[RMDB]
RNA sequence: GGGAACGACUCGAGUAGAGUCGAAAAGAAUGGCGAAAGCGAGGAGCUCCGGGUCGAUAUUUUUUCCCUGAACGUUCCGCAGGAAGCAUCCUUCGCGGGACCUGCACCGUGUUGGAUGCAAAAAGAAUAGCACAUGUAUAUUCGUAUACAUGUGCUAAAAAGAAACAACAACAACAAC
Reactivity to DMS in 0.01 (KOAc 150mM, MgCl2 10mM, bicine 150mM(pH8.5), 24C), signal-to-noise 5, nucleotides 027 to 126: g000a100a080u010g000g010c040g010a070a090a170g010c050g010a060g010g010a190g010c030u000c060c060g020g000g020u000c020g000a080u010a000u000u000u000u000u000u000c020c000c000u010g000a050a290c060g000u000u000c010c020g000c080a090g010g010a100a120g000c000a010u000c000c000u000u000c010g010c000g000g000g000a060c060c050u000g000c030a130c000c010g010u000g010u000u000g000g020a010u000g010c010a020a030a060a090a040g000a090a110
Reactivity to 2A3 in 0.01 (KOAc 150mM, MgCl2 10mM, bicine 150mM(pH8.5), 24C), signal-to-noise 2, nucleotides 027 to 126: g050a030a030u130g040g010c030g020a100a060a030g020c040g020a070g030g020a050g050c010u030c030c000g040g020g030u040c040g000a040u030a110u110u090u040u010u050u030c020c000c000u030g100a110a020c040g020u020u030c030c030g070c040a020g030g100a120a020g000c000a000u010c000c000u020u000c010g000c000g000g000g020a030c000c010u080g020c030a040c010c010g010u010g000u020u010g000g020a010u000g000c000a010a010a000a040a010g050a040a050